[RMDB]
RNA sequence: GGGAACGACUCGAGUAGAGUCGAAAAGCUCGGAGACGAGCAAGGCUGACAAAACUCUGUCCCAACCUCCACGUGGUGUCGGCUGGAUAAUGCUGCAUUAUGUUGCAUUUAUCAACAGGGAAGAAAACGAGCAUUAUUACUUCGGUAAUAAUGCUCGAAAAGAAACAACAACAACAAC
Reactivity to DMS in 0.01 (KOAc 150mM, MgCl2 10mM, bicine 150mM(pH8.5), 24C), signal-to-noise 3, nucleotides 027 to 126: g000c000u030c000g020g000a170g010a230c000g040a010g000c010a080a020g020g010c040u000g000a010c040a050a070a120a090c010u010c020u000g000u000c010c020c010a090a090c080c010u000c000c030a120c100g020u000g000g000u000g000u000c060g000g000c000u000g030g010a030u020a010a000u010g000c000u010g000c010a120u010u070a120u040g020u000u000g000c010a000u010u000u020a030u010c030a110a090c040a060g000g000g010a100a090g010a130a100a070a210
Reactivity to 2A3 in 0.01 (KOAc 150mM, MgCl2 10mM, bicine 150mM(pH8.5), 24C), signal-to-noise 9, nucleotides 027 to 126: g000c000u000c000g010g020a100g020a030c020g000a000g000c010a000a010g030g000c010u030g000a020c010a030a260a050a060c030u000c020u030g030u020c000c000c000a020a030c020c020u070c010c020a080c070g050u080g010g010u020g010u030c000g020g000c000u030g070g000a010u010a020a000u020g010c010u020g000c020a100u080u110a180u300g030u020u030g000c010a000u080u090u120a020u020c000a000a020c000a020g030g000g030a040a050g070a040a070a010a020

Chemical mapping of a 177-nucleotide RNA with DMS and 2A3. For 2A3, 10,798 sequencing reads were counted. Conditions: 150 mM KOAc, 10 mM MgCl2 and 150 mM bicine (pH 8.5), 24 C. 2A3 adducts were read by reverse transcription with SuperScript II with manganese. Values cover nucleotides 27 to 126.